[RMDB]
RNA sequence: GGGAACGACUCGAGUAGAGUCGAAAAGAUCGAGGAGGUCUGUCCCCUGGGUCAGCUCCUCAGGACCCUGGCAGAAUCAGAGACAAAUCUGAGGCGGGGGACAGUGUGGAGGCCAGGAAGGUGGAGACCGUAAUAUCACGUUCGCGUGAUAUUACGGAAAAGAAACAACAACAACAAC
Reactivity to DMS in 0.01 (KOAc 150mM, MgCl2 10mM, bicine 150mM(pH8.5), 24C), signal-to-noise 3, nucleotides 027 to 126: g000a110u010c080g000a090g000g000a120g000g000u000c010u010g000u010c010c010c010c050u000g010g030g010u000c040a120g000c160u000c010c020u010c040a060g000g010a120c060c020c010u000g010g010c040a140g000a110a140u000c030a020g000a060g000a160c250a080a120a100u000c010u000g030a020g000g020c050g010g000g010g000g010a040c040a040g020u000g010u020g000g010a060g000g000c050c020a070g000g000a070a070g020g020u000g000g000a140g020a170
Reactivity to 2A3 in 0.01 (KOAc 150mM, MgCl2 10mM, bicine 150mM(pH8.5), 24C), signal-to-noise 1, nucleotides 027 to 126: g050a010u060c040g010a000g050g040a010g000g130u010c010u010g030u020c010c010c030c010u100g010g000g090u040c030a020g030c030u020c000c020u050c040a020g020g050a020c040c020c020u020g090g000c020a060g120a140a090u050c010a010g020a010g120a220c120a090a240a040u040c010u030g020a000g010g010c010g020g000g000g000g010a000c020a010g040u080g050u080g110g040a010g020g000c030c010a000g010g040a000a060g060g030u080g010g040a050g050a020
Structure probing data (DMS and 2A3) for a 177-nucleotide construct. It was measured as part of the RMDB library OK2TST. Values cover nucleotides 27 to 126. The RNA was probed in 150 mM KOAc, 10 mM MgCl2 and 150 mM bicine (pH 8.5) at 24 C.